[RMDB]
The record gives the reactivity of an RNA of 177 nucleotides to 2A3 and DMS. DMS adducts were read by reverse transcription with MarathonRT. For 2A3 the reverse transcriptase was SuperScript II with manganese. The reactions ran in a buffer of 150 mM KOAc, 10 mM MgCl2 and 150 mM bicine (pH 8.5), at 24 C.
RNA sequence: GGGAACGACUCGAGUAGAGUCGAAAAAUUAUACCUGACAGGGAGGUUCUCUACCAGGAGUUCGAUGAGAUGGAAGAGUGCUCUCAGCACUUACCGUACAUCGAGCAAGGGAUGAUGCUCGCUGAGCUCCUCGGGAUCAUUUCGAUGAUCCCGAGGAAAAAGAAACAACAACAACAAC
Reactivity to 2A3 in 0.01 (KOAc 150mM, MgCl2 10mM, bicine 150mM(pH8.5), 24C), signal-to-noise 2, nucleotides 027 to 126: a000u220u120a080u150a130c000c020u000g040a010c000a040g070g050g000a010g000g010u050u030c000u010c010u040a170c020c010a110g090g110a080g120u000u000c000g000a000u010g000a020g000a300u000g020g090a080a270g010a050g040u000g000c000u000c050u070c180a030g020c000a000c010u020u040a000c000c000g000u010a000c010a000u000c000g000a000g000c000a020a000g050g000g000a010u120g000a010u000g070c000u010c020g170c060u040g000a020g060c050
Reactivity to DMS in 0.01 (KOAc 150mM, MgCl2 10mM, bicine 150mM(pH8.5), 24C), signal-to-noise 1, nucleotides 027 to 126: a080u020u030a070u000a000c070c010u030g020a050c120a100g000g030g000a100g010g000u090u000c020u050c020u000a220c000c040a100g060g020a110g010u010u000c000g030a010u020g010a170g030a000u020g010g000a280a070g040a020g060u000g020c010u000c180u000c180a090g000c000a000c000u000u000a160c020c000g000u000a060c020a000u000c000g010a000g000c020a220a100g000g000g000a140u000g000a050u000g000c000u000c000g000c130u000g000a020g000c020

The 2A3 profile rests on 1,105 reads.